Conditions: 150 mM KOAc, 10 mM MgCl2 and 150 mM bicine (pH 8.5), 24 C. Structure probing data (DMS and 2A3) for a 177-nucleotide construct. As a SHAPE reagent, 2A3 marks flexible, mostly unpaired nucleotides at the ribose 2'-OH. Source: RMDB library OK1LIB, as collected in RNAgym. DMS adducts were read by reverse transcription with MarathonRT.

RNA sequence: GGGAACGACUCGAGUAGAGUCGAAAAGACGAUGAAUUGGAUCCACAAAGAAUCUAUCAUAGUCCUGGUCUACAAGCAUAUUUCAUCGGCAAGAAUACAGAGGAAGCACUCAAGGUUGACUUGACACCUGACUCCAUCAUUUCGAUGAUGGAGUCAGAAAAGAAACAACAACAACAAC
Reactivity to DMS in 0.01 (KOAc 150mM, MgCl2 10mM, bicine 150mM(pH8.5), 24C), signal-to-noise 2, nucleotides 027 to 126: g010a020c100g000a000u050g030a020a050u010u020g000g000a060u020c030c040a200c300a050a120a130g040a010a060u000c030u030a090u040c050a040u000a070g010u000c000c020u010g020g000u010c000u110a080c160a030a150g000c060a120u030a210u010u000u010c040a000u020c090g020g000c070a010a010g000a080a070u020a040c050a060g000a130g000g000a080a030g020c030a080c080u050c000a010a020g000g020u000u020g030a030c010u020u040g000a050c200a030c220
Reactivity to 2A3 in 0.01 (KOAc 150mM, MgCl2 10mM, bicine 150mM(pH8.5), 24C), signal-to-noise 3, nucleotides 027 to 126: g030a000c010g030a020u040g020a010a140u060u170g040g000a020u020c040c000a060c100a120a150a030g060a050a030u030c040u060a060u080c070a070u050a010g000u000c000c030u020g010g040u030c000u010a070c060a060a120g030c040a070u040a100u170u110u050c040a030u070c050g020g010c030a030a020g040a120a000u150a100c050a040g080a040g080g040a130a040g050c050a020c080u050c020a010a070g060g000u030u080g040a140c050u030u030g050a020c010a070c030